[RMDB]
RNA sequence: GGGAACGACUCGAGUAGAGUCGAAAAUCUUUUUUAAAAAACCAUAGUGUCGCUUGCGGCUUGCGUCUCUUGGAUGAAAUGCUAAUUCAAUACUAUACGGAUUUUUCUGAGAAAGAUGUCAAUUUAAACGACUACUGUUUUAGCAUGUCGUACAAUGAACAGUGAAAAAGUUCGCUUUUUCACUGUUAAAAGAAACAACAACAACAAC
Reactivity to 2A3 in 0.01 (KOAc 150mM, MgCl2 10mM, bicine 150mM(pH8.5), 24C), signal-to-noise 2, nucleotides 027 to 156: u040c000u120u070u030u000u000u060a070a220a050a050a010a030c020c000a070u040a040g010u020g060u110c020g020c080u050u170g050c030g000g000c000u000u060g020c030g040u000c000u000c000u050u090g070g010a030u040g080a090a080a020u070g040c030u020a000a060u010u070c010a030a020u020a060c010u060a040u040a130c050g000g110a160u130u050u020u070u050c010u050g040a040g050a020a100a020g030a010u060g040u030c000a030a050u020u100u300a160a210a020c050g010a000c010u040a060c010u100g050u100u040u080u110a020g030c040a030u080g030u030c030g010u040a040c050a070a000u120g020
Reactivity to DMS in 0.01 (KOAc 150mM, MgCl2 10mM, bicine 150mM(pH8.5), 24C), signal-to-noise 1, nucleotides 027 to 156: u010c010u000u000u000u000u000u000a000a050a050a070a070a090c020c010a100u010a050g000u020g040u000c050g010c080u000u010g030c300g000g010c030u000u000g010c010g040u000c020u000c120u000u000g000g020a090u000g010a010a040a040u000g020c040u000a040a230u020u000c020a050a100u020a030c040u000a110u000a060c110g030g040a140u020u000u000u000u000c010u020g010a120g030a080a050a020g010a030u010g000u000c050a040a140u000u000u000a050a120a080c040g010a050c030u000a020c030u010g010u000u000u000u000a010g030c000a000u000g050u000c020g030u000a110c060a050a110u000g020
The record gives the reactivity of an RNA of 207 nucleotides to 2A3 and DMS. 2A3 adducts were read by reverse transcription with SuperScript II with manganese. For DMS the reverse transcriptase was MarathonRT. High 2A3 reactivity points to a flexible backbone, as in loops and unpaired stretches. The data come from the RNA Mapping Database (RMDB), library OK3TST.